[RMDB]
RNA sequence: GGGAACGACUCGAGUAGAGUCGAAAAGUGUCACUACUUAGACCUUGUGUCUCCUCAUCUCAACUAAACGAAAUUUUAUCCAUCGCACACAUGUUCGCAUGUGUUUGCGUAUGGUGCAAUUGAAAUUUAUUCAAAGACUGUUCGCAGUCUUUGAAUAAAAAGAAACAACAACAACAAC
Reactivity to 2A3 in 0.01 (KOAc 150mM, MgCl2 10mM, bicine 150mM(pH8.5), 24C), signal-to-noise 8, nucleotides 027 to 126: g110u120g060u080c030a020c150u210a020c030u090u110a040g020a050c000c000u060u120g070u050g010u110c010u030c010c010u060c030a160u000c020u030c040a070a140c060u150a140a050a050c070g110a080a070a070u080u090u110u150a060u040c000c000a000u000c000g010c000a000c000a010c010a010u010g030u050u060c170g010c090a000u000g000u000g020u030u040u110g000c000g020u070a010u010g000g000u010g000c020a030a040u030u060g060a080a030a010u010u010
Reactivity to DMS in 0.01 (KOAc 150mM, MgCl2 10mM, bicine 150mM(pH8.5), 24C), signal-to-noise 3, nucleotides 027 to 126: g010u010g010u010c170a140c160u050a040c080u030u000a070g000a050c040c020u020u010g000u020g020u000c000u000c010c010u000c100a120u020c040u020c060a100a100c200u030a030a090a070c130g000a060a050a020u000u010u000u020a100u010c000c000a000u000c010g000c010a040c010a010c000a000u000g000u010u060c240g000c010a000u000g010u000g000u000u010u010g010c000g010u030a010u000g000g000u000g030c300a030a040u030u010g010a070a050a070u000u000